Notes
Chemical mapping of a 177-nucleotide RNA with 2A3 and DMS.
[RMDB]
RNA sequence: GGGAACGACUCGAGUAGAGUCGAAAAGUGUGUGGGAUCUCGUUGCCGGGCGCUUGACUCAUGCGCCGCGCUCCAGUGUCCAGGCCAUGCGGCCCACGAUGUUUACCUCUGCCCCGCAACGGCAUGGACCAUCGUUAAGCUUCGGCUUAACGAUGGUAAAAGAAACAACAACAACAAC
Reactivity to 2A3 in 0.01 (KOAc 150mM, MgCl2 10mM, bicine 150mM(pH8.5), 24C), signal-to-noise 3, nucleotides 027 to 126: g100u090g000u050g000u070g080g010g100a180u030c070u050c090g030u010u010g000c010c000g020g010g000c030g000c010u030u080g050a110c050u100c170a070u130g040c050g010c010c000g040c000g000c030u040c010c000a050g010u030g030u060c000c050a060g000g000c030c000a050u120g010c020g000g000c010c010c000a010c010g020a060u100g050u150u220u160a100c040c020u050c060u040g010c000c000c000c010g060c020a040a010c010g030g030c020a050u060g060g020
Reactivity to DMS in 0.01 (KOAc 150mM, MgCl2 10mM, bicine 150mM(pH8.5), 24C), signal-to-noise 2, nucleotides 027 to 126: g010u030g030u000g010u030g000g000g000a090u020c050u010c080g040u010u000g020c020c160g020g030g000c020g030c050u010u090g000a080c070u030c030a060u020g000c280g020c020c040g000c090g000c100u000c080c100a110g010u000g010u000c010c040a060g030g000c040c050a140u020g000c050g000g020c050c060c030a120c110g010a070u030g010u030u010u000a090c120c010u020c040u010g000c020c000c010c160g000c030a080a050c080g010g000c050a080u000g000g030
For 2A3 the reverse transcriptase was SuperScript II with manganese. The RNA was probed in 150 mM KOAc, 10 mM MgCl2 and 150 mM bicine (pH 8.5) at 24 C. For DMS the reverse transcriptase was MarathonRT. The DMS profile rests on 2,647 reads. The data come from the RNA Mapping Database (RMDB), library OK1LIB.